[RMDB]
RNA sequence: GGGAACGACUCGAGUAGAGUCGAAAACAAUGGGUCUUUGACAAUUCGUAGUAAGCGAGGAUUACAUACGAUUCCAGAUACAACUACGAUAAGUAUUGCUAAAGUGGGAUUAUGCGAUAUCGUGAUCACAAAUAUCGUGGUUCGCCACGAUAUUUGUAAAAGAAACAACAACAACAAC
Reactivity to DMS in 0.01 (KOAc 150mM, MgCl2 10mM, bicine 150mM(pH8.5), 24C), signal-to-noise 5, nucleotides 027 to 126: c090a100a080u020g020g010g030u010c020u010u020u020g010a030c100a070a140u050u000c000g020u000a020g000u040a110a110g010c100g040a140g000g010a030u000u000a080c100a070u040a100c170g000a090u020u010c010c010a040g010a150u050a090c120a060a040c070u000a010c010g000a040u020a060a130g020u010a020u000u010g020c110u000a040a050a090g000u020g000g020g020a030u010u020a040u010g000c070g030a050u000a080u010c060g010u000g010a090u020c130
Reactivity to 2A3 in 0.01 (KOAc 150mM, MgCl2 10mM, bicine 150mM(pH8.5), 24C), signal-to-noise 9, nucleotides 027 to 126: c040a020a070u090g070g010g030u030c050u080u080u130g080a070c030a080a090u040u000c020g010u010a030g020u030a130a080g050c060g050a060g020g030a030u040u080a090c050a090u130a060c120g070a030u060u050c020c000a020g010a070u150a110c060a060a010c060u050a000c000g010a010u060a120a010g030u030a020u040u090g010c040u120a140a040a070g110u150g050g060g030a070u070u080a040u190g030c030g030a050u010a020u150c070g060u090g050a040u090c040